RNA sequence: GGGAACGACUCGAGUAGAGUCGAAAAUGAGAAGAGCACUGUGCGCAACGACAAAAGUAACGGCGAACAUGACGACAAAAGCGGGGUACGCAGUUACAAGAACAACAGUGCAGACGGCGCCCGCAACGGGAGCGCAUAAUUUCGAUUAUGCGCUCCCAAAAGAAACAACAACAACAAC
Reactivity to DMS in 0.01 (KOAc 150mM, MgCl2 10mM, bicine 150mM(pH8.5), 24C), signal-to-noise 2, nucleotides 027 to 126: u000g020a230g020a080a170g000a200g030c000a030c000u030g000u020g000c140g060c190a180a110c180g000a140c250a090a090a070a110g000u000a030a000c000g000g000c000g010a050a080c020a040u000g000a110c050g000a100c050a060a080a090a100g000c000g000g010g000g000u000a060c000g000c000a000g010u000u000a020c000a040a190g000a110a000c200a030a030c010a000g000u000g000c000a050g000a100c060g020g000c090g000c020c000c020g000c120a080a050c260
Reactivity to 2A3 in 0.01 (KOAc 150mM, MgCl2 10mM, bicine 150mM(pH8.5), 24C), signal-to-noise 2, nucleotides 027 to 126: u230g020a020g030a190a060g010a000g040c010a000c000u000g020u080g010c120g020c060a120a090c030g190a050c060a020a160a050a000g020u060a020a010c010g040g000c010g020a060a000c020a060u230g140a050c020g000a010c050a030a200a000a030g060c040g000g000g000g000u070a060c000g000c000a000g000u000u030a020c060a080a030g040a110a000c000a030a000c000a020g000u000g000c010a000g020a000c100g050g000c030g000c000c000c000g070c010a030a020c080